Record summary
An RNA of 177 nucleotides, treated with DMS and 2A3 and read out base by base. The 2A3 profile rests on 16,977 reads. In probing experiments dimethyl sulfate is read out at A N1 and C N3, which are open when not base-paired. For 2A3 the reverse transcriptase was SuperScript II with manganese. The DMS profile rests on 8,136 reads.
RNA sequence: GGGAACGACUCGAGUAGAGUCGAAAACGGUAAUGGCGAAUGGGACCCACAAAUCUCUCUAGAUUCCGAUAGAGAAUCGAGAGAAAAGUGGCUCUCCCUUAGCCAUCCGAGUGGACGUGCGUCCUCCGCCAAUAAUUAUGUUCGCAUAAUUAUUGGCAAAAGAAACAACAACAACAAC
Reactivity to DMS in 0.01 (KOAc 150mM, MgCl2 10mM, bicine 150mM(pH8.5), 24C), signal-to-noise 6, nucleotides 027 to 126: c010g000g010u010a050a020u000g010g010c000g010a170a090u000g000g000g020a040c270c000c000a010c010a030a130a230u000c010u000c000u000c010u000a150g010a010u000u000c000c020g010a180u010a100g000a170g010a010a000u000c000g000a030g000a010g010a000a010a060a180g000u000g000g000c010u010c090u000c000c000c000u000u000a260g000c000c000a010u000c010c010g010a120g010u000g000g000a040c020g010u010g020c170g000u000c000c000u010c050c090
Reactivity to 2A3 in 0.01 (KOAc 150mM, MgCl2 10mM, bicine 150mM(pH8.5), 24C), signal-to-noise 7, nucleotides 027 to 126: c010g000g020u090a090a030u010g010g000c010g040a050a030u040g010g000g000a020c050c050c010a000c010a010a290a020u010c010u000c000u000c020u070a100g000a020u000u010c020c030g240a280u170a180g270a010g000a040a000u010c020g000a010g000a000g000a010a030a010a000g010u010g000g000c000u000c000u000c010c000c000u000u010a000g000c000c000a000u020c000c000g000a020g030u060g010g020a040c090g170u300g140c140g030u100c000c010u020c030c060